RNA sequence: GGGAACGACUCGAGUAGAGUCGAAAAGCGCUAUGCCGAUCGGGUGUCCGCACUAAGUUCGGCAUCAAUAUGGUGACCUCCCGGGAGCGGGGGACCACCAGGUUGCCUAAGGAGGGGUGAACCGGCCCAGGUCGGAAACGGAGCAGGUCAAAACUCCCCAAUGUAUUGACUUCGGUCAAUACAUUGGAAAAGAAACAACAACAACAAC
Reactivity to DMS in 0.01 (KOAc 150mM, MgCl2 10mM, bicine 150mM(pH8.5), 24C), signal-to-noise 1, nucleotides 027 to 156: g010c010g060c040u000a010u000g010c010c010g010a030u000c010g050g070g020u000g040u000c050c070g000c020a070c010u010a080a300g020u000u000c040g010g030c010a020u000c050a130a170u010a100u000g010g040u020g000a070c010c010u010c000c010c000g040g040g000a230g030c020g040g010g000g030g020a020c010c000a040c000c000a000g000g010u010u010g020c000c040u000a100a070g000g010a300g080g000g030g050u000g010a050a060c090c050g040g010c000c000c010a070g040g010u000c050g030g010a060a130a130c030g010g010a040g030c010a040g000g000u000c090a090a040a070a090c020u010c000c020
Reactivity to 2A3 in 0.01 (KOAc 150mM, MgCl2 10mM, bicine 150mM(pH8.5), 24C), signal-to-noise 3, nucleotides 027 to 156: g070c030g020c070u050a020u070g040c000c000g010a020u020c020g000g020g020u050g050u070c050c070g050c030a040c040u080a170a120g070u030u060c020g010g020c000a010u000c000a010a110u130a070u110g000g000u010g020a090c010c010u050c000c020c010g040g110g030a200g080c090g020g020g000g000g040a080c120c000a000c000c000a000g030g000u020u030g020c000c000u030a050a030g070g020a020g000g110g000g010u050g030a050a050c040c000g000g020c000c000c010a050g030g000u020c020g020g000a040a030a020c040g000g000a020g020c050a050g040g090u070c050a020a020a040a120c020u040c010c000
An RNA of 207 nucleotides, treated with DMS and 2A3 and read out base by base.
DMS adducts were read by reverse transcription with MarathonRT.
For DMS, 2,510 sequencing reads were counted.